[RMDB]
RNA sequence: GGGAACGACUCGAGUAGAGUCGAAAAAUAGGCUUAUCAAGAGAGGUGGAGGGACUGGCACGAUGAAACCCGGCAGCCAGAAAUGGUGCCAAUUCGUGCAGCGGAAACGUUGAAAGAUGAGCCGAUGAAACAUAAGAGUUCGCUCUUAUGAAAAGAAACAACAACAACAAC
Reactivity to 2A3 in 0.01 (KOAc 150mM, MgCl2 10mM, bicine 150mM(pH8.5), 24C), signal-to-noise 9, nucleotides 027 to 129: a000u130a030g000g000c010u000u020a010u040c060a130a020g080a010g010a040g090g050u210g060g050a170g030g050g020a060c030u050g060g040c000a000c010g020a030u050g100a090a060a070c030c030c000g000g000c020a060g210c010c000a010g020a010a030a010u030g000g000u000g000c000c010a000a030u040u000c010g000u000g010c000a010g020c020g050g020a090a040a030c060g100u060u070g050a100a060a020g000a000u020g010a010g010c000c000g000a030u090g060a020a060a010
Reactivity to DMS in 0.01 (KOAc 150mM, MgCl2 10mM, bicine 150mM(pH8.5), 24C), signal-to-noise 7, nucleotides 027 to 129: a070u020a060g000g010c020u000u030a060u000c030a050a050g070a280g000a050g010g020u030g000g010a290g020g050g000a110c030u000g050g010c010a130c030g000a030u000g000a050a090a090c190c170c110g000g000c020a010g040c010c000a000g000a060a070a080u000g000g000u020g000c000c000a040a110u000u000c040g020u010g030c000a050g000c030g000g000a180a110a050c040g000u010u000g000a110a140a060g000a010u000g000a020g030c000c010g020a080u010g010a090a060a120